[RMDB]
RNA sequence: GGGAACGACUCGAGUAGAGUCGAAAAGACGCCGUCGACUACGGUGCGGAUUCGUUCGACUACACCUCGAGCGGGACGGAGACGGAUCUCGAUGUCUUCUACGUCGCUCGCAACCCGGCAAGCGUCGAGAUUCGGAAGACCGCACCGGGAGCGGGCGUAGAGGCCAAUAUUUCGAUAUUGGCCUCUAAAAAGAAACAACAACAACAAC
Reactivity to 2A3 in 0.01 (KOAc 150mM, MgCl2 10mM, bicine 150mM(pH8.5), 24C), signal-to-noise 1, nucleotides 027 to 156: g020a010c020g010c030c010g040u150c070g050a100c040u250a060c000g080g010u020g020c010g010g020a030u070u050c050g000u000u000c000g000a010c030u070a120c050a070c040c070u030c020g010a030g000c000g000g000g020a020c030g050g000a050g010a000c020g000g080a130u070c050u030c130g020a020u120g030u010c000u040u030c030u010a070c110g130u080c000g000c010u020c010g020c000a060a280c020c000c010g000g000c130a080a070g020c010g050u020c010g050a010g020a080u260u210c000g020g010a060a040g030a050c020c020g000c060a040c000c000g010g000g000a010g010c000g000g000g030c000g000